RNA sequence: GGGAACGACUCGAGUAGAGUCGAAAAUGCUGGCCCGCGGCCACAUAAACAAUGACUCGGGGCCUUUCUGCCUCUGCCGCUUGUGUGUGCGCGCGCCGGCUCUGCGGUGUCGGCGGCGGCUGCGGCGAACGCAGCCGUGGUUCGCCACGGCUGCGUUAAAAGAAACAACAACAACAAC
Reactivity to DMS in 0.01 (KOAc 150mM, MgCl2 10mM, bicine 150mM(pH8.5), 24C), signal-to-noise 1, nucleotides 027 to 126: u000g000c140u010g000g030c030c020c070g010c050g000g000c000c000a030c030a030u040a090a110a190c100a170a080u010g000a070c010u000c010g050g010g000g000c030c090u010u000u030c110u040g030c020c050u010c020u020g010c020c050g040c040u000u020g020u000g000u000g010u020g000c000g120c000g040c220g030c040c000g000g010c000u000c020u000g010c220g050g040u030g000u000c030g000g010c010g020g000c020g020g040c040u010g000c000g000g000c000g020
Reactivity to 2A3 in 0.01 (KOAc 150mM, MgCl2 10mM, bicine 150mM(pH8.5), 24C), signal-to-noise 2, nucleotides 027 to 126: u120g000c040u030g030g000c000c000c020g180c050g040g010c080c020a020c010a010u170a030a200a000c100a090a240u220g080a060c060u020c080g020g050g000g000c030c000u010u040u020c060u040g000c000c000u000c060u090g000c000c000g030c080u110u050g040u020g000u010g030u120g120c020g000c000g010c020g030c030c010g000g000c020u000c040u040g050c070g080g000u050g010u030c010g000g010c010g000g040c000g010g000c030u050g000c010g000g010c000g040